RNA sequence: GGGAACGACUCGAGUAGAGUCGAAAAACUCUGAACAAACAAAAAGACACUUUGGGUUAGAUAUCCUGGGGUGAAAGCAAGCACUUUGAAAGUAAGCCAAGCCUGUGUACAGAUCUGACCACCUGAGCAACCACUUUACGUUCGCGUAAAGUGGUUGAAAAGAAACAACAACAACAAC
Reactivity to 2A3 in 0.01 (KOAc 150mM, MgCl2 10mM, bicine 150mM(pH8.5), 24C), signal-to-noise 1, nucleotides 027 to 126: a000c060u070c060u110g110a110a000c070a170a100a050c040a000a140a010a040a050g070a090c050a010c100u020u050u190g020g000g010u030u000a050g000a080u070a020u140c020c010u020g010g030g000g000u030g080a070a000a000g050c020a010a010g060c050a020c180u200u010u060g190a180a080a000g050u110a020a000g020c020c000a000a020g050c000c060u160g000u000g070u110a010c000a030g040a000u000c000u010g010a000c060c000a050c000c040u040g050a020g020
Reactivity to DMS in 0.01 (KOAc 150mM, MgCl2 10mM, bicine 150mM(pH8.5), 24C), signal-to-noise 1, nucleotides 027 to 126: a070c070u000c000u010g020a100a070c100a070a040a110c040a130a060a060a120a110g000a160c130a060c110u000u000u000g000g000g000u000u000a060g000a050u000a040u020c140c020u030g010g020g010g000u000g020a030a020a130g000c030a050a220g000c090a040c050u030u010u000g000a110a100a050g000u010a120a120g000c050c030a080a300g020c030c050u000g010u000g000u020a120c050a060g010a030u000c070u000g020a030c070c020a100c130c040u020g010a050g000
Conditions: 150 mM KOAc, 10 mM MgCl2 and 150 mM bicine (pH 8.5), 24 C. Chemical mapping of a 177-nucleotide RNA with 2A3 and DMS. Reactivities are given for positions 27 through 126. DMS adducts were read by reverse transcription with MarathonRT. The DMS profile rests on 636 reads.